[RMDB]
RNA sequence: GGGAACGACUCGAGUAGAGUCGAAAAAGCCUCCUCGCUGGCGCCGGCUGGGCAACAUUCCGAGGGGACCGUCCCCCUCGGUAAUGGCGAAUGGGACCCAGAUCUCUCUCUAGCUUCCGAUAGAGAAAAACCAAGGCCUUCGGGCCUUGGAAAAGAAACAACAACAACAAC
Reactivity to DMS in 0.01 (KOAc 150mM, MgCl2 10mM, bicine 150mM(pH8.5), 24C), signal-to-noise 2, nucleotides 027 to 129: a050g020c010c000u040c050c010u000c040g000c020u040g040g040c030g060c040c030g050g030c000u010g080g040g060c050a110a090c000a040u000u050c010c010g010a040g000g020g020g000a210c260c060g000u090c000c000c000c000c000u010c000g000g000u060a010a070u050g020g000c070g050a060a160u050g000g030g050a130c030c040c040a080g030a100u000c110u000c030u000c000u020c000u080a060g010c050u000u000c080c000g000a070u050a030g020a010g070a020a130a190a100a170
Reactivity to 2A3 in 0.01 (KOAc 150mM, MgCl2 10mM, bicine 150mM(pH8.5), 24C), signal-to-noise 1, nucleotides 027 to 129: a000g000c000c010u010c000c000u060c050g060c070u090g000g050c180g020c020c030g000g070c000u030g010g010g040c020a060a040c010a150u070u000c030c010g000a000g040g000g000g000a020c040c040g110u170c030c000c000c000c000u000c000g000g000u030a000a000u040g000g060c000g020a060a030u070g000g000g000a000c010c000c010a010g020a070u050c040u000c020u000c000u000c000u040a020g000c000u110u020c040c010g020a110u040a030g040a040g000a060a010a050a010a020
Source information: This 170-nucleotide RNA was probed chemically with DMS and 2A3. Values cover nucleotides 27 to 129. Conditions: 150 mM KOAc, 10 mM MgCl2 and 150 mM bicine (pH 8.5), 24 C. As a SHAPE reagent, 2A3 marks flexible, mostly unpaired nucleotides at the ribose 2'-OH. The data come from the RNA Mapping Database (RMDB), library 15KLIB.